[RMDB]
RNA sequence: GGGAACGACUCGAGUAGAGUCGAAAACUCGCUGGCCAUCGAGCAGCCCAUUCGUAAAUUUAUCUUGGACUCCUCCGUUCUCGUUCGGCUCAAAAAUCGUACGACCUUUCGGGUAUCUGAACUUUGGAAAAUAGAGCUUACCAUUGUAAAGCAGCUGGAUUAUACUGCACUUCGGUGCAGUAUAAUCAAAAGAAACAACAACAACAAC
Reactivity to 2A3 in 0.01 (KOAc 150mM, MgCl2 10mM, bicine 150mM(pH8.5), 24C), signal-to-noise 3, nucleotides 027 to 156: c010u030c020g000c020u040g060g040c020c000a090u080c040g000a010g050c040a010g010c000c040c020a060u110u150c040g060u070a070a150a240u080u180u130a120u090c060u060u150g050g020a060c030u040c020c000u040c040c040g000u030u000c030u000c020g040u060u040c020g020g000c010u000c050a080a080a000a030a030u080c030g020u040a020c040g030a060c050c010u070u120u080c050g030g000g020u060a040u060c040u040g010a070a050c010u050u070u090g020g010a010a000a050a040u090a030g070a000g060c050u030u040a040c000c000a070u040u120g040u120a030a080a050g080c050a010g040c020u040g050
Reactivity to DMS in 0.01 (KOAc 150mM, MgCl2 10mM, bicine 150mM(pH8.5), 24C), signal-to-noise 1, nucleotides 027 to 156: c020u010c050g050c030u010g000g030c070c020a080u010c030g020a050g020c030a190g010c010c020c020a150u010u010c060g000u000a040a140a140u020u010u000a080u030c050u000u010g040g000a050c000u000c040c030u040c000c020g010u020u000c020u000c020g010u020u000c000g030g030c040u030c030a010a070a060a080a130u000c020g000u000a110c070g010a060c020c030u000u000u000c020g040g010g020u000a060u010c020u030g030a050a070c050u000u010u020g020g000a040a050a070a110u000a090g000a140g010c020u000u000a090c030c030a120u020u010g010u000a030a060a040g000c020a080g020c010u000g010